Chemical mapping of a 177-nucleotide RNA with 2A3 and DMS. Values cover nucleotides 27 to 126. Source: RMDB library OK1LIB, as collected in RNAgym. The RNA was probed in 150 mM KOAc, 10 mM MgCl2 and 150 mM bicine (pH 8.5) at 24 C.
[RMDB]
RNA sequence: GGGAACGACUCGAGUAGAGUCGAAAAGGUGUGUAUCGCACGGCUCGAUCAGUGGGAGUAGGCUCAGGUCGAUUGCUCUAUUGGUUUGGUCUGUGUCCUGGUUGCUCGCUGAGAGUAAAACCAAUGGCUAAAUAUUUAUAUUCGUAUAAAUAUUUAGAAAAGAAACAACAACAACAAC
Reactivity to 2A3 in 0.01 (KOAc 150mM, MgCl2 10mM, bicine 150mM(pH8.5), 24C), signal-to-noise 2, nucleotides 027 to 126: g040g000u020g000u000g020u040a070u100c050g010c010a000c000g000g000c000u000c030g070a140u010c000a010g010u030g020g010g000a030g110u060a010g000g010c010u000c050a010g050g040u000c000g020a050u000u160g010c010u000c020u090a100u060u170g030g000u020u010u080g000g000u020c000u000g010u010g040u080c020c000u060g070g010u140u130g080c000u000c000g000c040u020g010a010g000a000g000u000a070a010a020a000c010c000a020a030u070g010g000
Reactivity to DMS in 0.01 (KOAc 150mM, MgCl2 10mM, bicine 150mM(pH8.5), 24C), signal-to-noise 2, nucleotides 027 to 126: g010g000u010g020u020g000u020a030u010c130g030c040a050c000g010g010c030u010c010g010a090u010c030a020g000u010g000g010g010a020g020u000a050g000g000c010u020c050a040g010g000u010c010g020a070u020u020g010c060u020c290u020a110u020u020g000g000u000u000u000g010g000u010c030u010g000u000g000u030c010c020u000g000g000u020u040g020c010u010c020g000c100u000g000a080g000a020g010u010a040a060a070a150c020c020a080a070u020g010g010